The record gives the reactivity of an RNA of 177 nucleotides to 2A3 and DMS.
The RNA was probed in 150 mM KOAc, 10 mM MgCl2 and 150 mM bicine (pH 8.5) at 24 C.
DMS adducts were read by reverse transcription with MarathonRT.
Reactivities are given for positions 27 through 126.
RNA sequence: GGGAACGACUCGAGUAGAGUCGAAAAACAGGGUGAUAAUCGCCAUCAGCGUUAACAGCGCCGCAGCGGUAAAGGAGCCGACGGUGUUGUAGUCCUGCUCCAGCAAUUCAAUCUGUAACGGCAGCGACUAGUGGCGAUGAUUCGUCAUCGCCACUAGAAAAGAAACAACAACAACAAC
Reactivity to 2A3 in 0.01 (KOAc 150mM, MgCl2 10mM, bicine 150mM(pH8.5), 24C), signal-to-noise 1, nucleotides 027 to 126: a010c040a010g030g000g000u030g030a060u080a160a130u170c010g020c010c010a030u120c080a080g000c020g000u000u030a120a010c000a030g000c010g010c020c000g010c030a120g030c020g010g000u060a160a100a220g280g110a010g010c000c010g030a030c020g020g000u040g010u010u010g020u030a020g010u020c000c000u000g000c010u000c000c010a030g020c060a070a040u160u130c010a030a110u040c080u110g010u080a080a000c020g070g000c000a010g060c010g080a060
Reactivity to DMS in 0.01 (KOAc 150mM, MgCl2 10mM, bicine 150mM(pH8.5), 24C), signal-to-noise 1, nucleotides 027 to 126: a100c070a050g010g000g000u000g000a100u040a070a070u000c030g040c030c030a030u020c160a070g010c040g000u000u030a080a060c100a060g020c000g010c000c020g030c160a130g020c010g020g010u010a070a100a070g000g000a140g000c030c110g010a130c040g000g020u000g000u030u000g020u010a170g010u000c040c010u000g030c030u000c040c030a100g010c110a070a040u010u000c170a090a070u010c020u000g010u000a070a040c210g030g010c070a010g020c050g010a110